This 207-nucleotide RNA was probed chemically with 2A3. It was measured as part of the RMDB library M2RFPK.
[RMDB]
RNA sequence: GGGAACGACUCGAGUAGAGUCGAAAAAGUCAGUGGUUCGACUUACGAGUCGGACCACUGACAUGGCAGCUGGAUCCAGCCAGGCGGUGUAUCGCCAAACCCAGCCAAUCAAUCUACCCACCGGGAAUACAGAAAGCGAACUUCGGUUCGCUUUCAAGAGAUCCAAGUAGUUCGCUACUUGGAUCUCAAAAGAAACAACAACAACAAC
Reactivity to 2A3 in 0.01 (KOAc 150mM, MgCl2 10mM, bicine 150mM(pH8.5), 24C), signal-to-noise 1, nucleotides 027 to 156: a000g000u000c000a010g000u000g000g010u010u000c010g030a000c000u020u000a080c230g060a000g000u010c000g000g000a000c000c000a000c000u000g000a000c000a000u000g000g000c010a000g000c020u010g010g010a080u130c120c010a000g000c010c040a040g010g000c030g010g000u220g050u060a100u230c030g040c000c030a010a010a040c000c000c000a000g020c100c000a040a070u120c070a020a070u080c050u170a090c000c020c060a070c120c070g070g020g030a040a010u110a120c040a080g000a020a040a000g030c000g000a000a000c000u040u060c120g060g020u000u000c000g000c000u000u000u000c000a000a010